Conditions: 150 mM KOAc, 10 mM MgCl2 and 150 mM bicine (pH 8.5), 24 C. The record gives the reactivity of an RNA of 177 nucleotides to DMS and 2A3.
[RMDB]
RNA sequence: GGGAACGACUCGAGUAGAGUCGAAAACUUUUGGAAUGAGCAUGUGGACUUGGCUUAUGGAUUGUGCCUACCCCAGAGCGUUGCUGUGUCUCUCAACACACACAGCUUCCAUGGGCUGCUCACUCCACCCAUACCUACACUUCGGUGUAGGUAUGGGAAAAGAAACAACAACAACAAC
Reactivity to DMS in 0.01 (KOAc 150mM, MgCl2 10mM, bicine 150mM(pH8.5), 24C), signal-to-noise 2, nucleotides 027 to 126: c070u000u000u040u010g060g020a060a050u010g020a020g030c010a070u020g030u000g010g010a120c180u000u010g000g000c010u010u030a090u000g000g000a130u000u020g030u000g000c030c020u030a140c120c030c000c020a060g020a100g010c090g040u000u010g000c000u000g010u000g000u000c060u000c120u020c250a090a150c250a120c300a030c010a000c000a000g010c000u000u000c010c030a140u000g000g030g000c140u020g010c010u000c000a000c050u030c010c010a120
Reactivity to 2A3 in 0.01 (KOAc 150mM, MgCl2 10mM, bicine 150mM(pH8.5), 24C), signal-to-noise 3, nucleotides 027 to 126: c030u100u090u130u120g000g010a010a010u020g000a000g020c030a050u090g050u150g120g100a170c130u120u070g030g010c040u140u080a080u230g160g060a110u160u160g050u140g110c000c000u020a050c040c000c010c000a010g030a010g030c150g030u050u060g000c010u000g010u010g010u010c000u030c030u030c180a130a070c020a010c000a000c000a000c010a110g020c040u010u030c010c000a060u030g010g000g080c030u020g020c000u010c000a000c010u000c010c000a030
Record summary: 2A3 is a SHAPE reagent: it acylates the 2'-hydroxyl of flexible nucleotides of all four kinds.